An RNA of 177 nucleotides, treated with DMS and 2A3 and read out base by base. DMS adducts were read by reverse transcription with MarathonRT. For 2A3 the reverse transcriptase was SuperScript II with manganese. The reactions ran in a buffer of 150 mM KOAc, 10 mM MgCl2 and 150 mM bicine (pH 8.5), at 24 C. For 2A3, 1,282 sequencing reads were counted.
RNA sequence: GGGAACGACUCGAGUAGAGUCGAAAAGGCUGCGUUACCGUGAUGGCACAGGACAAGCCAACAGUCGACAUAGAGUUGGUCACGACGACGGUUAGUAACAUGGCCGAGGUAAGAUCCUAUUGCUACAGUGCUAGUCCUAGUUCGCUAGGACUAGCACAAAAGAAACAACAACAACAAC
Reactivity to DMS in 0.01 (KOAc 150mM, MgCl2 10mM, bicine 150mM(pH8.5), 24C), signal-to-noise 2, nucleotides 027 to 126: g030g000c010u010g000c150g000u010u000a020c000c040g000u000g010a170u030g000g000c050a110c080a110g010g000a110c140a100a150g010c000c010a070a130c120a090g020u000c030g030a070c030a080u000a090g000a030g020u000u010g010g010u000c090a070c100g000a010c050g000a050c070g020g020u000u040a080g050u010a030a020c060a020u000g000g030c010c010g000a120g000g030u000a030a080g000a110u000c010c030u010a130u000u010g000c020u000a070c140a060
Reactivity to 2A3 in 0.01 (KOAc 150mM, MgCl2 10mM, bicine 150mM(pH8.5), 24C), signal-to-noise 1, nucleotides 027 to 126: g030g000c020u010g030c030g000u020u030a000c000c000g010u020g050a130u070g040g000c050a010c060a140g030g140a050c000a130a040g010c040c000a000a020c050a020g120u070c000g030a040c020a050u130a050g130a000g260u090u080g130g000u040c030a000c080g030a000c000g020a000c010g000g020u000u000a110g020u010a000a050c050a120u110g000g000c000c020g000a010g020g020u080a100a050g030a050u000c000c000u030a100u030u270g030c000u020a060c050a130